This 207-nucleotide RNA was probed chemically with 2A3 and DMS. For 2A3 the reverse transcriptase was SuperScript II with manganese. The RNA was probed in 150 mM KOAc, 10 mM MgCl2 and 150 mM bicine (pH 8.5) at 24 C. High 2A3 reactivity points to a flexible backbone, as in loops and unpaired stretches. The 2A3 profile rests on 1,204 reads. Values cover nucleotides 27 to 156.
RNA sequence: GGGAACGACUCGAGUAGAGUCGAAAAACAACUGAACAGCGGGCGAGUGUUGGCCGCACUUCUACUCUGAGUGAACGCGGCAACUGAUAAACGCAACCGACACGGAUGCAACGGUGACCGACGCCGAGAUCGAGGCCUUCUUUGCUGAAGAGGCUGCGUUUAGUUGGUUGUUCGCAACCAACUAAACAAAAGAAACAACAACAACAAC
Reactivity to 2A3 in 0.01 (KOAc 150mM, MgCl2 10mM, bicine 150mM(pH8.5), 24C), signal-to-noise 2, nucleotides 027 to 156: a000c020a010a050c080u090g060a050a030c040a060g030c040g040g030g030c010g040a070g080u090g010u060u030g060g070c000c000g040c010a010c030u110u060c010u050a040c020u060c080u190g100a040g040u070g070a120a020c080g000c010g000g000c010a010a000c020u030g020a040u060a060a020a010c020g000c000a000a030c000c020g080a070c060a030c300g020g000a010u040g010c020a040a050c040g000g040u020g010a060c020c040g030a020c020g040c090c030g010a080g020a110u100c050g030a040g000g040c030c000u160u150c020u060u050u050g040c030u030g010a060a050g040a010g020g000c000u010g000c000
Reactivity to DMS in 0.01 (KOAc 150mM, MgCl2 10mM, bicine 150mM(pH8.5), 24C), signal-to-noise 1, nucleotides 027 to 156: a050c040a130a170c080u000g040a080a070c030a170g140c020g000g030g000c010g000a070g020u000g020u000u010g000g040c100c060g010c050a070c030u010u000c040u010a050c110u010c020u030g030a060g000u000g010a060a090c100g010c000g030g030c020a030a070c000u000g020a150u000a070a020a020c040g020c030a110a040c020c000g000a110c120a300c030g000g000a130u000g000c020a040a050c080g000g020u030g040a080c010c000g040a180c030g000c030c020g000a220g020a110u000c040g010a240g000g020c040c010u010u050c030u010u000u020g040c080u000g010a190a150g030a130g000g080c000u000g030c070